[RMDB]
RNA sequence: GGGAACGACUCGAGUAGAGUCGAAAAACUACGUUAUCUAACUUUUCUUUCAGAGGCUUAGAAUAAUGAGGGGUACCUACUUUAGAUAAUUUAGAUGUAAUAGCUGCUGAUGUCGCAUUAGUAUGACGGGAAUUGUACUAUUCGUAGUACAAUUCCCAAAAGAAACAACAACAACAAC
Reactivity to DMS in 0.01 (KOAc 150mM, MgCl2 10mM, bicine 150mM(pH8.5), 24C), signal-to-noise 2, nucleotides 027 to 126: a120c050u010a080c060g010u000u000a020u010c000u000a030a060c160u010u010u000u020c010u010u010u010c130a100g050a110g000g010c170u040u020a090g030a040a010u000a020a050u010g000a110g000g010g000g000u060a080c110c030u000a050c090u010u010u000a040g000a020u010a040a030u000u010u010a020g000a080u010g020u000a020a050u000a060g010c040u000g000c020u020g000a060u010g010u060c090g000c080a050u020u000a070g010u030a030u020g000a140c190
Reactivity to 2A3 in 0.01 (KOAc 150mM, MgCl2 10mM, bicine 150mM(pH8.5), 24C), signal-to-noise 4, nucleotides 027 to 126: a000c040u110a050c020g050u010u010a020u020c010u000a010a020c020u100u100u100u000c020u010u200u130c100a080g020a020g080g010c020u070u120a040g050a230a080u140a090a110u200g050a100g010g020g040g010u060a060c000c020u040a100c020u100u160u020a050g020a070u060a110a040u090u050u050a000g020a090u060g060u170a110a080u030a140g010c020u020g010c020u030g020a020u040g110u100c070g000c100a000u020u000a040g070u040a040u220g090a040c030